An RNA of 177 nucleotides, treated with 2A3 and DMS and read out base by base. The RNA was probed in 150 mM KOAc, 10 mM MgCl2 and 150 mM bicine (pH 8.5) at 24 C. DMS adducts were read by reverse transcription with MarathonRT. The data come from the RNA Mapping Database (RMDB), library M2PK50.

[RMDB]
RNA sequence: GGGAACGACUCGAGUAGAGUCGAAAAUGUGACAUGUUCGCAUGUCACAAGCCAGGUAGUUCCUAUCUCAAAUACCUGUACAGGCCAUGGUCUGGAUAGGAAAGCUCUACCUAUUCGUAGGUAGAAAUACCGAUAUCUUUUUCGAAAGAUAUCGGUAAAAAGAAACAACAACAACAAC
Reactivity to 2A3 in 0.01 (KOAc 150mM, MgCl2 10mM, bicine 150mM(pH8.5), 24C), signal-to-noise 5, nucleotides 027 to 126: u050g010u000g000a000c000a000u010g000u040u110c270g000c110a000u000g000u010c000a000c000a010a000g040c020c020a050g030g060u070a050g040u050u030c010c000u030a090u070c070u020c080a120a150a050u170a140c010c000u020g010u030a030c020a040g030g010c040c030a110u300g060g010u020c020u020g030g000a010u020a010g000g000a060a060a010g040c020u020c000u010a000c010c000u010a020u020u060c250g030u020a010g000g010u000a000g010a030a050a010
Reactivity to DMS in 0.01 (KOAc 150mM, MgCl2 10mM, bicine 150mM(pH8.5), 24C), signal-to-noise 5, nucleotides 027 to 126: u000g010u010g000a010c000a010u000g010u010u010c210g020c010a000u000g010u000c010a000c000a030a080g010c090c070a100g010g020u000a070g010u000u000c000c010u000a060u000c060u010c100a110a080a130u020a080c010c010u000g010u000a050c050a030g000g010c030c070a090u010g040g010u000c040u000g010g000a030u000a010g000g010a080a090a110g000c160u000c000u000a000c000c000u000a010u000u000c170g010u000a010g000g010u000a010g010a010a090a150